[RMDB]
RNA sequence: GGGAACGACUCGAGUAGAGUCGAAAAGAACUGCUGGGUUCCCCUGAUGUCCAGUCCCUCCCCGCUCCUGGAGAAGGGAGACUCGGGAACGCCUAGCAUCUGAGGGACGAAGCCGCCCCCGGGCGCUACAGCUGUCACUUCGGUGACAGCAAAAGAAACAACAACAACAAC
Reactivity to DMS in 0.01 (KOAc 150mM, MgCl2 10mM, bicine 150mM(pH8.5), 24C), signal-to-noise 2, nucleotides 027 to 129: g010a000a000c060u020g060c030u020g000g030g050u040u010c080c050c030c000u000g030a110u030g060u060c030c050a070g000u030c020c040c010u040c020c000c010c070g030c000u020c040c090u000g030g050a240g060a060a120g000g000g000a080g010a000c050u050c060g000g010g060a000a050c150g000c000c050u020a020g030c050a070u000c120u000g030a100g000g010g010a000c090g020a090a080g030c090c040g000c000c000c000c000c000g000g020g000c040g000c110u070a050c150a160
Reactivity to 2A3 in 0.01 (KOAc 150mM, MgCl2 10mM, bicine 150mM(pH8.5), 24C), signal-to-noise 4, nucleotides 027 to 129: g010a060a010c040u040g000c000u010g010g000g000u050u060c030c000c000c020u070g060a100u160g070u050c010c030a030g020u000c000c000c000u010c000c000c010c010g030c030u050c000c030u100g040g070a170g020a140a090g040g030g000a040g000a000c030u040c010g000g010g000a050a010c040g030c010c030u040a030g000c000a030u000c010u010g020a100g010g020g010a010c000g030a070a030g060c030c010g030c010c000c000c000c030g010g010g000c020g000c030u070a040c030a060
Background
The record gives the reactivity of an RNA of 170 nucleotides to DMS and 2A3. For 2A3 the reverse transcriptase was SuperScript II with manganese. Values cover nucleotides 27 to 129. The RNA was probed in 150 mM KOAc, 10 mM MgCl2 and 150 mM bicine (pH 8.5) at 24 C.